The record gives the reactivity of an RNA of 177 nucleotides to DMS and 2A3.
For DMS the reverse transcriptase was MarathonRT.
[RMDB]
RNA sequence: GGGAACGACUCGAGUAGAGUCGAAAAGAUGAUUUCCUGCAAUUCUUCCGGCACCGACGACGAACCAUGCAUGACAAGGUGGGUGUUCGGCAGCUUGCGAUGGAUUUCCUCGAUCACAUGCAUGGCAGUGCGUAGCGAUAUUCGUAUCGCUACGCACAAAAGAAACAACAACAACAAC
Reactivity to DMS in 0.01 (KOAc 150mM, MgCl2 10mM, bicine 150mM(pH8.5), 24C), signal-to-noise 3, nucleotides 027 to 126: g040a100u000g010a050u000u000u000c010c010u010g030c040a030a040u010u000c020u020u010c000c010g010g000c010a010c020c030g000a020c030g030a200c280g010a140a170c030c000a010u000g010c000a020u010g030a160c270a040a110g000g010u000g000g000g030u000g030u010u010c000g010g000c040a040g010c300u000u000g000c010g020a140u030g000g000a050u000u000u000c030c030u010c080g020a110u000c080a200c000a020u010g000c000a030u000g010g010c300a100
Reactivity to 2A3 in 0.01 (KOAc 150mM, MgCl2 10mM, bicine 150mM(pH8.5), 24C), signal-to-noise 2, nucleotides 027 to 126: g100a020u180g020a040u040u020u020c010c040u000g020c020a010a020u180u070c000u040u010c000c000g020g000c000a000c020c000g250a090c050g020a030c030g070a060a000c020c010a000u010g040c000a040u050g120a160c040a180a010g180g050u070g080g010g000u050g070u190u300c000g010g000c010a000g030c000u010u000g020c000g160a200u270g020g010a010u030u020u000c000c010u070c050g060a120u100c060a040c020a020u030g030c010a020u020g020g030c020a020
2A3 is a SHAPE reagent: it acylates the 2'-hydroxyl of flexible nucleotides of all four kinds.
The DMS profile rests on 1,371 reads.
The 2A3 profile rests on 1,753 reads.
The RNA was probed in 150 mM KOAc, 10 mM MgCl2 and 150 mM bicine (pH 8.5) at 24 C.